[RMDB]
RNA sequence: GGGAACGACUCGAGUAGAGUCGAAAACGACUGCGUUUCGACGCAGUCGAACAUUAUGUGGUGAAAUAUAAAAGCCGAAAUUCCGAUACCAUAUAAUUUAUAUUACCUACGAGUUCGCUCGUAGGAACACAGUUAGUAGUUUCGACUACUAACUGUGAAAAGAAACAACAACAACAAC
Reactivity to DMS in 0.01 (KOAc 150mM, MgCl2 10mM, bicine 150mM(pH8.5), 24C), signal-to-noise 4, nucleotides 027 to 126: c010g010a020c010u010g010c000g010u000u000u010c190g030a040c010g020c000a000g000u010c010g000a050a090c090a120u000u000a010u020g010u000g000g010u000g010a120a240a050u010a110u010a070a030a070a080g010c060c040g000a050a100a180u000u000c030c010g000a100u000a030c010c000a000u000a020u010a020a020u000u000u010a110u010a090u030u010a130c000c000u000a010c010g020a010g020u000u010c210g020c000u000c000g010u000a000g000g000a040a090
Reactivity to 2A3 in 0.01 (KOAc 150mM, MgCl2 10mM, bicine 150mM(pH8.5), 24C), signal-to-noise 6, nucleotides 027 to 126: c010g000a000c000u010g000c000g010u000u030u130c200g030a010c010g000c000a000g010u000c000g000a000a000c000a010u040u040a010u020g020u010g000g010u060g060a070a180a000u210a020u060a150a190a050a050g070c050c040g080a110a080a080u130u000c030c010g040a060u040a130c000c000a000u020a000u020a070a030u040u160u100a290u050a120u110u210a140c000c000u000a000c000g000a000g000u040u060c150g060c090u000c000g000u000a000g000g000a000a000
About this RNA
Chemical mapping of a 177-nucleotide RNA with DMS and 2A3. For DMS the reverse transcriptase was MarathonRT. The reactions ran in a buffer of 150 mM KOAc, 10 mM MgCl2 and 150 mM bicine (pH 8.5), at 24 C. 2A3 adducts were read by reverse transcription with SuperScript II with manganese.